[RMDB]
RNA sequence: GGGAACGACUCGAGUAGAGUCGAAAACGAUAAGCAUUCGUGCUUAUCGACGGUACGAAAGUACAAAGGAGCAAUAGCAUCGGCUCCUAAAAACGAUGCAAAAGACAACGGGGUUCGCCCCGUUGAAUAUAUUAUAUCGUUUCGACGAUAUAAUAUAAAAAGAAACAACAACAACAAC
Reactivity to DMS in 0.01 (KOAc 150mM, MgCl2 10mM, bicine 150mM(pH8.5), 24C), signal-to-noise 6, nucleotides 027 to 126: c020g000a000u000a000a010g020c000a030u000u010c200g020u000g010c000u000u000a010u000c010g020a070c240g020g010u000a000c000g010a140a080a210g010u000a000c000a100a140a150g000g000a000g010c000a090a120u010a120g010c000a010u000c000g010g010c010u000c000c000u010a000a020a010a020a040c000g010a000u000g010c000a090a080a110a120g010a170c020a000a000c000g010g000g000g020u000u010c240g010c010c000c000c010g010u000u000g000a050a110
Reactivity to 2A3 in 0.01 (KOAc 150mM, MgCl2 10mM, bicine 150mM(pH8.5), 24C), signal-to-noise 5, nucleotides 027 to 126: c000g000a000u010a000a000g000c000a000u040u120c200g120u050g000c010u000u000a000u000c000g010a010c030g090g000u010a010c000g030a160a060a030g010u010a010c040a050a180a070g000g010a000g000c030a070a300u100a160g000c000a030u010c010g010g010c000u010c000c020u060a030a030a000a000a000c010g010a000u000g000c010a090a050a000a030g070a030c000a000a000c000g010g010g010g030u040u050c150g100c000c000c000c000g000u000u000g000a000a000